[RMDB]
RNA sequence: GGGAACGACUCGAGUAGAGUCGAAAAAGUCGCGGAGCGGACGGUACUCAACGGCCACCUGGGCCGGGUGCGUGCGAUUCCACUCUUCAACCAGGUCUUUGGGUGAGGCGGGCCGGACGGCGCCAACUAAAGGGAUCGAUUUCGAUCGAUCCCUUUAAAAAGAAACAACAACAACAAC
Reactivity to DMS in 0.01 (KOAc 150mM, MgCl2 10mM, bicine 150mM(pH8.5), 24C), signal-to-noise 1, nucleotides 027 to 126: a050g010u000c120g020c170g040g000a070g070c020g010g010a080c180g040g000u000a050c050u010c030a060a150c070g020g020c010c080a110c170c070u000g020g000g000c050c090g020g000g020u000g000c170g020u000g000c040g000a140u000u010c040c010a050c050u000c030u000u010c140a090a090c000c010a000g030g010u000c110u000u000u010g010g010g000u000g010a120g000g010c050g020g000g040c070c000g000g030a050c080g000g020c050g010c000c030a030a100c150